Structure probing data (DMS and 2A3) for a 177-nucleotide construct. Conditions: 150 mM KOAc, 10 mM MgCl2 and 150 mM bicine (pH 8.5), 24 C. It was measured as part of the RMDB library OK1LIB. DMS adducts were read by reverse transcription with MarathonRT. For 2A3 the reverse transcriptase was SuperScript II with manganese.
RNA sequence: GGGAACGACUCGAGUAGAGUCGAAAAUUCAUACCGAUGCCCCAGAAAAAGCUAAGGCGAGGCGCGAAAGCAUCGAUGGUGAGACCAGCAGCGAUGCCAGUUUCACAGUACUGAAUUCCAUCGGCAAAUCCAUCAUAGGCUUCGGCCUAUGAUGGAUAAAAGAAACAACAACAACAAC
Reactivity to DMS in 0.01 (KOAc 150mM, MgCl2 10mM, bicine 150mM(pH8.5), 24C), signal-to-noise 2, nucleotides 027 to 126: u030u030c010a050u060a070c070c020g020a060u020g000c030c050c050c060a190g020a080a050a080a030a030g010c080u000a090a030g010g020c010g000a000g000g010c140g000c020g010a060a120a070g000c000a050u020c060g000a090u030g000g000u000g000a060g020a080c010c000a190g020c000a010g000c270g020a150u000g000c000c050a190g000u000u000u000c010a020c030a070g050u030a060c130u000g000a060a090u050u030c070c030a100u040c060g000g010c160a070a110
Reactivity to 2A3 in 0.01 (KOAc 150mM, MgCl2 10mM, bicine 150mM(pH8.5), 24C), signal-to-noise 4, nucleotides 027 to 126: u060u010c040a040u070a130c000c030g040a040u050g000c000c000c020c040a030g180a050a080a050a010a010g060c070u160a110a010g110g000c020g040a010g050g020c050g000c050g080a100a070a040g010c020a030u040c020g040a060u090g050g040u030g030a050g040a090c020c020a020g050c000a000g020c010g050a030u050g020c010c010a000g000u010u030u040c060a060c010a000g090u110a080c060u040g040a000a040u120u040c030c000a060u070c060g010g000c040a110a180